[RMDB]
Structure probing data (2A3) for a 207-nucleotide construct. The RNA was probed in 150 mM KOAc, 10 mM MgCl2 and 150 mM bicine (pH 8.5) at 24 C. Reactivities are given for positions 27 through 156. It was measured as part of the RMDB library M2RFPK.

RNA sequence: GGGAACGACUCGAGUAGAGUCGAAAAACGAGGUACGCCUCGAAAAUAUGACCGGUGUCAUAGCCUCUAUCACACAGAGGUCGCGUGGGUUCAACUCCCCCCCUUUUCCGAGGGUAUCGGAAACCAAAAAACACAAUUUGGUUCGCCAAAUUGUGAACGUACUGCGUUUGUUCGCAAACGCAGUACGAAAAGAAACAACAACAACAAC
Reactivity to 2A3 in 0.01 (KOAc 150mM, MgCl2 10mM, bicine 150mM(pH8.5), 24C), signal-to-noise 2, nucleotides 027 to 156: a000c020g010a020g010g000u030a020c180g040c010c040u010c010g030a080a000a010a050u120a050u030g010a010c040c090g050g020u180g020u100c010a040u050a020g000c010c000u030c000u030a100u160c040a050c010a010c000a150g020a000g010g030u030c010g000c000g050u090g060g030g000u070u140c050a060a030c080u070c000c000c010c000c000c000c000u000u010u000u120c000c000g000a000g010g020g000u050a030u010c000g000g010a000a000a000c010c010a030a030a050a050a070a000c010a010c000a020a000u000u000u000g020g020u060u070c120g040c010c000a000a000a000u000u010g000u000g000a030a000